[RMDB]
RNA sequence: GGGAACGACUCGAGUAGAGUCGAAAAGGGUGAUGUCUCCUAACCUUUAUCAAUGGGGGCACUCGGUCGUGCUGUGGGUAGAAAUUUUAUUUCGUGCCUACCUUAGACGCUAGUCGUCGGGAGUAUGUGGGACUGAUGAACUUCGGUUCAUCAGUAAUCAACACUUCUACUUCGGUAGAAGUGUUGAAAAAGAAACAACAACAACAAC
Reactivity to DMS in 0.01 (KOAc 150mM, MgCl2 10mM, bicine 150mM(pH8.5), 24C), signal-to-noise 2, nucleotides 027 to 156: g040g020g010u010g010a050u040g020u000c060u000c020c020u000a150a110c030c050u000u000u010a170u030c120a090a090u010g020g010g010g030g020c030a100c020u000c030g020g030u000c020g010u000g020c030u010g010u000g050g050g020u020a280g000a040a030a060u000u020u000u000a080u010u020u010c010g020u000g080c000c020u000a010c030c070u000u040a110g040a030c020g000c030u000a090g020u010c010g020u000c020g020g020g000a140g000u000a060u000g000u010g010g030g000a070c000u000g010a010u010g020a020a000c000u000u000c300g060g020u000u000c000a020u000c000a010g010u010a010a130
Reactivity to 2A3 in 0.01 (KOAc 150mM, MgCl2 10mM, bicine 150mM(pH8.5), 24C), signal-to-noise 3, nucleotides 027 to 156: g070g010g010u080g020a090u070g030u040c000u010c000c000u040a060a140c030c000u140u200u140a200u150c090a060a060u160g000g000g000g000g000c000a000c020u020c010g020g000u010c010g000u040g010c060u070g000u070g000g030g010u030a030g090a000a040a010u180u220u160u210a110u020u110u120c050g040u150g020c010c010u020a050c010c000u030u060a040g000a030c000g000c040u070a040g080u260c000g000u000c000g010g030g000a080g030u080a070u160g050u110g030g030g010a020c000u000g000a010u010g010a000a000c000u050u030c100g080g000u000u000c000a000u000c000a000g000u000a000a080

This 207-nucleotide RNA was probed chemically with DMS and 2A3. It was measured as part of the RMDB library M2RFPK. In probing experiments dimethyl sulfate is read out at A N1 and C N3, which are open when not base-paired.